An RNA of 170 nucleotides, treated with 2A3 and DMS and read out base by base. Source: RMDB library 15KLIB, as collected in RNAgym. The reactions ran in a buffer of 150 mM KOAc, 10 mM MgCl2 and 150 mM bicine (pH 8.5), at 24 C. In probing experiments dimethyl sulfate is read out at A N1 and C N3, which are open when not base-paired.

RNA sequence: GGGAACGACUCGAGUAGAGUCGAAAAUUACCCACGGGAACUGCUGGGUUCCCCUGAUGUCCAGUCCCUCCCCGUUCCUGGAGAAGGGAGACUCGGGAACGCCUAGCAUCUGAGGGACAAAGCCGCCACAGGCGCCAGUUCGCUGGCGCCAAAAGAAACAACAACAACAAC
Reactivity to 2A3 in 0.01 (KOAc 150mM, MgCl2 10mM, bicine 150mM(pH8.5), 24C), signal-to-noise 4, nucleotides 027 to 129: u140u100a100c000c010c020a000c000g020g000g010a040a070c040u040g020c020u020g030g000g050u050u060c010c000c000c030u120g050a060u120g070u000c020c010a020g010u010c010c000c000u010c020c020c000c000g040u070u030c020c030u050g100g040a070g010a080a090g060g030g000a020g030a000c020u000c000g000g000g000a000a010c020g000c010c030u030a010g000c010a010u050c060u130g020a060g000g000g010a020c020a010a060a010g020c000c030g030c030c030a060c030a100
Reactivity to DMS in 0.01 (KOAc 150mM, MgCl2 10mM, bicine 150mM(pH8.5), 24C), signal-to-noise 2, nucleotides 027 to 129: u040u050a050c000c050c010a090c000g000g040g080a060a100c100u050g030c070u040g000g000g000u020u000c030c120c000c050u020g030a090u090g020u040c060c140a090g050u040c010c020c000u000c030c060c030c000g020u020u010c010c020u070g080g040a100g010a140a120g020g050g000a070g020a060c010u060c040g010g040g030a020a080c060g000c100c000u020a050g020c140a060u090c080u000g020a080g000g040g020a080c180a020a000a100g010c030c050g050c010c060a110c150a180